[RMDB]
RNA sequence: GGGAACGACUCGAGUAGAGUCGAAAAUAGAUGGAUGCUAUCCCAUAGAUCUUCAACUGAUAGAAAUGUAAAGAAUAAAUGAUUUUGGGGUGUGUAUUCUCAAUCAGUAGGUCUAUCAUUGAACAAAUCCUGAUUUAGGAUUCGUCCUAAAUCAGGAAAAAGAAACAACAACAACAAC
Reactivity to 2A3 in 0.01 (KOAc 150mM, MgCl2 10mM, bicine 150mM(pH8.5), 24C), signal-to-noise 2, nucleotides 027 to 126: u100a010g080a060u080g110g050a040u160g000c010u030a050u130c000c000c010a010u020a010g020a010u000c020u040u030c030a030a050c090u010g010a010u020a050g040a050a090a020u110g020u140a150a060a060g090a100a060u080a170a150a030u110g070a050u050u100u130u140g000g000g010g000u070g000u000g030u080a080u130u000c050u020c040a030a040u000c000a000g050u070a020g020g040u020c000u000a010u070c030a020u000u100g010a050a020c040a050a030a110
Reactivity to DMS in 0.01 (KOAc 150mM, MgCl2 10mM, bicine 150mM(pH8.5), 24C), signal-to-noise 3, nucleotides 027 to 126: u010a040g020a090u010g010g010a120u000g000c040u010a070u000c000c000c010a170u010a090g000a060u000c040u000u010c070a070a040c160u000g000a020u000a040g000a050a110a060u010g000u000a060a120a090g000a060a050u010a050a130a070u000g000a070u000u010u000u000g010g020g010g000u000g020u020g000u010a040u000u000c020u000c080a060a030u010c010a030g030u010a080g000g000u000c010u010a010u000c060a070u000u010g000a040a090c190a080a070a100
Structure probing data (2A3 and DMS) for a 177-nucleotide construct. For DMS, 2,941 sequencing reads were counted. The RNA was probed in 150 mM KOAc, 10 mM MgCl2 and 150 mM bicine (pH 8.5) at 24 C.